[RMDB]
Description
This 207-nucleotide RNA was probed chemically with 2A3 and DMS. For DMS the reverse transcriptase was MarathonRT.

RNA sequence: GGGAACGACUCGAGUAGAGUCGAAAAUGGCGGCUUUUGCACCAGCCAAGCACAGACUUCGUUCCACGUCAUUGAUCUGUUGCCAGCGAACAUCGCGAAGCUGGUCCAACGUGAAUAGCGAUCCUUCCGGCACAGGGUGGAAAGGUCCGUUGAUGGCCUGAGCUAAAUCAUUCGUGAUUUAGCUCAGAAAAGAAACAACAACAACAAC
Reactivity to 2A3 in 0.01 (KOAc 150mM, MgCl2 10mM, bicine 150mM(pH8.5), 24C), signal-to-noise 3, nucleotides 027 to 156: u100g050g020c030g000g000c040u060u080u090u120g050c040a030c010c000a010g000c000c020a050a020g090c050a030c050a070g070a040c030u090u020c070g100u040u020c020c010a030c040g100u050c060a100u020u280g060a080u090c010u090g040u120u080g100c010c030a040g030c030g070a070a110c040a170u170c080g020c040g140a050a010g000c030u030g040g000u000c050c010a050a050c070g020u040g050a060a080u060a090g030c020g010a010u020c000c000u040u000c070c050g000g030c060a060c050a090g080g110g030u010g010g050a020a030a000g040g010u020c030c010g020u010u060g020a090u070g050g000c000
Reactivity to DMS in 0.01 (KOAc 150mM, MgCl2 10mM, bicine 150mM(pH8.5), 24C), signal-to-noise 1, nucleotides 027 to 156: u010g000g040c020g000g010c050u000u000u000u010g010c060a110c030c040a140g030c050c030a080a210g000c060a050c090a030g000a080c060u110u000c050g000u010u000c020c030a110c000g030u020c090a150u000u010g040a120u000c040u010g000u010u000g010c000c000a130g020c060g000a080a130c080a100u000c070g020c010g000a140a250g070c040u000g000g000u020c060c070a060a040c010g030u020g000a040a110u000a120g000c010g000a050u000c020c030u000u000c020c030g000g000c010a210c070a070g000g000g000u010g000g000a000a050a070g010g000u010c020c010g000u020u010g000a130u010g020g040c140

For DMS, 2,488 sequencing reads were counted. The 2A3 profile rests on 1,913 reads.